[RMDB]
RNA sequence: GGGAACGACUCGAGUAGAGUCGAAAAGGGUGACCUUCGGGUCACCCAAAAAGCGUACUACAUUUCUUUUGACGAGAUGUAUCCCAUCCCAAAUAGGAUGGGCCGAGCCUCUCUCGAUAAGAAAUGUAUCGCAAAAACCGAAGUUUCGACUUCGGAAAGUGUAGACUAGGUUCGCCUAGUCUACACUAAAAGAAACAACAACAACAAC
Reactivity to DMS in 0.01 (KOAc 150mM, MgCl2 10mM, bicine 150mM(pH8.5), 24C), signal-to-noise 1, nucleotides 027 to 156: g020g010g070u010g000a030c000c030u000u000c300g070g020g050u000c000a000c000c030c010a000a000a040a080a030g020c030g050u000a050c130u000a020c000a000u000u000u000c010u000u000u000u000g020a300c150g020a070g030a060u000g070u030a240u000c010c000c000a000u010c000c000c030a150a170a210u000a070g020g000a020u010g020g000g030c090c060g000a250g000c030c070u000c030u000c000u010c000g030a120u010a010a000g020a010a050a010u000g000u000a010u030c010g010c030a080a070a080a130a170c000c000g000a020a070g010u000u010u000c260g000a030c010u000u000c000g000g000a020a020
Reactivity to 2A3 in 0.01 (KOAc 150mM, MgCl2 10mM, bicine 150mM(pH8.5), 24C), signal-to-noise 2, nucleotides 027 to 156: g000g010g000u050g000a000c030c070u110u160c300g040g000g000u000c000a010c040c030c010a000a040a000a000a000g050c030g000u050a040c090u020a000c010a000u010u000u010c010u000u030u050u140g170a130c190g000a000g000a000u050g030u100a080u060c000c000c020a010u000c000c010c040a200a300a060u300a220g000g000a000u020g010g000g000c000c020g090a030g030c000c000u000c000u000c000u000c010g050a080u030a300a010g000a010a000a000u000g000u000a010u230c000g000c050a020a020a020a020a020c000c000g000a000a000g000u030u050u190c180g050a070c000u000u010c000g000g010a130a090
This 207-nucleotide RNA was probed chemically with DMS and 2A3. For DMS the reverse transcriptase was MarathonRT. For DMS, 1,873 sequencing reads were counted. For 2A3, 860 sequencing reads were counted.